Description: Chemical mapping of a 207-nucleotide RNA with DMS and 2A3. The reactions ran in a buffer of 150 mM KOAc, 10 mM MgCl2 and 150 mM bicine (pH 8.5), at 24 C. 2A3 adducts were read by reverse transcription with SuperScript II with manganese. For DMS, 2,745 sequencing reads were counted.
RNA sequence: GGGAACGACUCGAGUAGAGUCGAAAAGAUUAAGUGGGAGCGUCGCCCUCUCGGUGCAUCGGAUAUUAAUUAGCCAGUGCGUGGCAUUACGCAUAUUGAUGUCUACUUUGGCGUAGACUAUGCCAAUUUAAGGAUUGUUGGGCAAUCCAGCCCUAGAGACUAUCAUUAGCUUCGGCUAAUGAUAGUCAAAAGAAACAACAACAACAAC
Reactivity to DMS in 0.01 (KOAc 150mM, MgCl2 10mM, bicine 150mM(pH8.5), 24C), signal-to-noise 1, nucleotides 027 to 156: g010a120u020u010a030a100g020u000g000g020g000a050g070c050g040u000c080g020c030c010c000u010c030u000c050g030g000u000g030c040a090u000c000g000g000a090u000a050u010u000a070a090u000u000a130g010c010c020a090g030u000g000c000g000u000g020g000c090a060u000u000a090c060g010c020a090u000a080u000u010g000a180u000g020u020c000u000a030c020u000u000u010g030g020c080g000u000a030g000a090c080u000a020u010g000c010c040a030a110u010u010u000a120a130g020g000a100u000u000g000u000u000g010g000g020c090a090a190u000c090c050a080g000c000c020c000u010a080g000a300
Reactivity to 2A3 in 0.01 (KOAc 150mM, MgCl2 10mM, bicine 150mM(pH8.5), 24C), signal-to-noise 2, nucleotides 027 to 156: g040a080u130u150a000a090g060u060g000g050g000a070g030c010g060u040c020g030c030c010c000u050c010u040c030g010g000u010g020c020a100u060c170g050g000a000u020a040u160u200a140a060u070u090a050g020c030c050a050g030u020g000c010g030u000g010g000c020a020u050u150a020c010g000c000a020u050a090u100u160g090a070u090g000u000c020u010a040c010u070u140u070g130g000c020g000u010a000g020a020c080u040a040u090g040c030c000a090a070u120u150u100a090a040g150g010a160u060u000g060u080u080g000g010g000c020a000a020u150c030c040a010g010c000c000c010u020a040g010a000